[RMDB]
RNA sequence: GGGAACGACUCGAGUAGAGUCGAAAAGAAAGAAAGAAAACCGUGUGGAAAAGAAUGGCUAUAACCACCGAAACCUGAGGAAACAGGAAGCCACAACGAAAGCCAUGUGGUUCGCACACGGAAGAAAAGUACUGAUACCUUUCGAGGUAUCAGUACUAAAAGAAACAACAACAACAAC
Reactivity to DMS in 0.01 (KOAc 150mM, MgCl2 10mM, bicine 150mM(pH8.5), 24C), signal-to-noise 3, nucleotides 027 to 126: g010a130a160a100g000a130a110a110g030a120a110a100a070c000c000g000u010g000u000g010g000a090a010a050a130g000a120a010u000g000g010c000u000a060u010a060a120c070c040a050c100c070g000a040a040a090c030c010u020g020a120g020g030a130a100a090c000a040g000g000a150a090g000c030c050a040c090a090a100c210g000a040a050a040g010c000c010a010u000g010u040g030g030u000u000c190g030c020a000c000a000c020g030g010a090a050g000a050a010a020
Reactivity to 2A3 in 0.01 (KOAc 150mM, MgCl2 10mM, bicine 150mM(pH8.5), 24C), signal-to-noise 3, nucleotides 027 to 126: g080a040a000a020g080a030a080a000g080a000a130a000a010c000c000g020u010g000u000g020g070a050a020a050a080g090a080a120u070g000g000c030u060a020u110a300a100c030c030a020c020c030g010a070a030a020c010c000u010g040a040g090g150a120a090a030c010a000g000g020a010a030g030c010c000a040c010a090a020c070g140a150a040a000g030c000c000a020u020g030u000g020g000u050u010c010g020c040a000c000a000c000g040g010a020a010g030a010a060a000